[RMDB]
RNA sequence: GGGAACGACUCGAGUAGAGUCGAAAAGCACCAGAGAAGAGCAGCAAGGUCUCGGAGCAGCUCAAGUGCUGCAGCGGCAUCCUCAAGGAGAUGUUUGCCAAGAAGCACGCCGCCUACGCCUGGCCCUUCUACAAGCCUGUGGACGUGGAGGCACUGACGUGAUCGUAAAUUUCGAUUUACGAUCACGAAAAGAAACAACAACAACAAC
Reactivity to 2A3 in 0.01 (KOAc 150mM, MgCl2 10mM, bicine 150mM(pH8.5), 24C), signal-to-noise 3, nucleotides 027 to 156: g050c040a050c030c020a010g010a000g010a100a000g020a010g040c050a000g010c030a060a100g030g030u030c020u060c090g040g000a050g030c020a020g000c010u080c130a100a070g050u050g050c000u010g000c010a020g020c010g000g000c000a010u040c000c040u120c120a100a140g130g010a150g020a030u090g060u000u110u300g000c010c000a110a030g030a070a000g020c030a000c040g010c000c010g040c020c000u030a020c040g020c000c020u010g020g000c000c000c000u090u130c020u090a080c060a060a020g010c010c010u100g000u150g070g000a060c050g020u030g010g020a030g010g020c010a020c070u040g010a020
Reactivity to DMS in 0.01 (KOAc 150mM, MgCl2 10mM, bicine 150mM(pH8.5), 24C), signal-to-noise 1, nucleotides 027 to 156: g000c030a090c010c000a180g010a060g010a050a040g020a090g010c020a060g000c080a130a060g020g010u000c000u000c040g040g010a100g020c020a000g000c050u000c000a040a090g040u010g000c010u010g000c040a120g010c030g000g020c010a060u000c030c020u010c080a080a230g060g020a130g010a020u010g020u000u000u020g060c010c050a090a180g010a070a050g030c010a000c030g070c050c030g060c030c000u000a040c110g020c020c010u010g000g040c000c030c030u000u000c040u010a080c050a040a150g010c040c010u010g000u000g020g000a040c080g050u000g000g020a090g040g000c020a100c050u000g000a300